[RMDB]
RNA sequence: GGGAACGACUCGAGUAGAGUCGAAAAAGCAGCAACGAUCGGGACGGAUCAUGAACAUGUCGUCGGUGGUGGGUCGCAAGGCCUUUGCGCGAUUCGCCGGCUACUCCUCCGCCAUGCACGCGAUCGCGACCCUGAAACUGUUCGCAGUUUCAGGGUCAAAAGAAACAACAACAACAAC
Reactivity to 2A3 in 0.01 (KOAc 150mM, MgCl2 10mM, bicine 150mM(pH8.5), 24C), signal-to-noise 1, nucleotides 027 to 126: a000g030c060a010g010c040a040a040c020g040a010u060c020g030g030g060a030c020g010g010a030u150c060a070u090g050a030a030c030a140u120g020u100c030g000u010c010g010g000u060g070g030u060g000g000g080u190c010g020c030a010a030g080g130c090c000u050u060u160g050c060g000c070g010a000u110u120c000g000c000c000g000g000c010u050a070c030u020c000c020u020c000c000g010c020c010a020u150g000c080a050c040g230c010g010a010u030c020g000c070
Reactivity to DMS in 0.01 (KOAc 150mM, MgCl2 10mM, bicine 150mM(pH8.5), 24C), signal-to-noise 1, nucleotides 027 to 126: a100g040c120a050g030c080a090a140c110g010a050u020c110g000g030g010a070c080g000g000a050u000c060a060u000g020a060a130c170a050u000g020u010c070g000u010c040g030g000u000g000g010u000g000g000g000u000c020g010c120a030a150g000g020c060c090u010u000u000g000c130g030c010g000a070u000u000c010g000c020c070g010g010c020u000a040c040u000c060c080u000c040c040g000c040c010a100u000g020c200a080c070g020c030g010a010u000c040g010c160